Chemical mapping of a 177-nucleotide RNA with 2A3 and DMS. The DMS profile rests on 36,860 reads. The data come from the RNA Mapping Database (RMDB), library M2PK50. Reactivities are given for positions 27 through 126. 2A3 adducts were read by reverse transcription with SuperScript II with manganese.
[RMDB]
RNA sequence: GGGAACGACUCGAGUAGAGUCGAAAACUGUCGUUCUUCGGAACGACAGAAAGAACGCGUGGGUCACGCAAGGAGGAGCGUGUGGGACGCGACAAUCCCAAAAAAGCGUUCGGUUCGCCGAACGCAACUAAUACAUGAAGUUCGCUUCAUGUAUUAGAAAAGAAACAACAACAACAAC
Reactivity to 2A3 in 0.01 (KOAc 150mM, MgCl2 10mM, bicine 150mM(pH8.5), 24C), signal-to-noise 9, nucleotides 027 to 126: c000u000g000u000c000g010u000u010c010u030u020c170g100g010a000a000c010g000a000c000a000g000a000a010a010g030a090a020c020g010c010g010u030g020g190g100u080c010a000c020g010c040a050a060g140g070a080g050g050a120g040c020g000u020g010u030g020g110g050a000c000g000c000g020a010c020a010a060u050c000c000c000a050a120a020a010a020a010g000c000g000u000u010c020g000g020u050u050c210g020c040c000g000a000a000c000g000c000a000a000
Reactivity to DMS in 0.01 (KOAc 150mM, MgCl2 10mM, bicine 150mM(pH8.5), 24C), signal-to-noise 9, nucleotides 027 to 126: c000u000g010u000c000g010u000u000c000u000u010c210g030g010a010a010c000g010a010c000a000g010a020a060a090g010a120a080c030g010c010g020u000g010g020g010u000c010a010c010g010c010a070a080g020g010a300g010g010a120g010c010g020u000g010u000g010g010g000a030c010g000c010g010a060c100a100a130u000c000c000c000a000a040a070a070a110a080g000c000g010u000u000c000g010g010u000u010c210g010c000c000g010a000a010c000g010c000a010a030